[RMDB]
RNA sequence: GGGAACGACUCGAGUAGAGUCGAAAACGAUCCUCGAGAGAGGAUCGACGAGUCUUCGGACUCGAUUACCGCGACGAUGUGCCGCGGGGCUACGAUGGUAUUGUGGGAAAGAAUACCAUUGUACCUUCUUGUCGUAGCCGAACAACUUGCACGUCCAAGUCCUCCAUAGUUUCGACUAUGGAGGACUAAAAGAAACAACAACAACAAC
Reactivity to 2A3 in 0.01 (KOAc 150mM, MgCl2 10mM, bicine 150mM(pH8.5), 24C), signal-to-noise 2, nucleotides 027 to 156: c010g000a000u000c000c000u000c010g060a050g000a010g010a000g080g000a000u000c000g010a010c010g000a000g000u000c000u030u160c210g080g010a000c000u000c000g000a070u110u180a070c000c000g000c000g000a010c080g000a010u000g000u000g010c000c010g010c010g020g070g010g010c000u000a000c000g020a040u150g000g010u000a000u010u050g000u010g020g010g040a080a190a080g150a100a060u100a110c000c000a000u000u020g010u000a000c000c000u190u190c160u230u300g010u000c020g000u010a010g000c000c000g030a020a010c050a020a070c030u090u100g000c000a000c000g010u020c000c010a040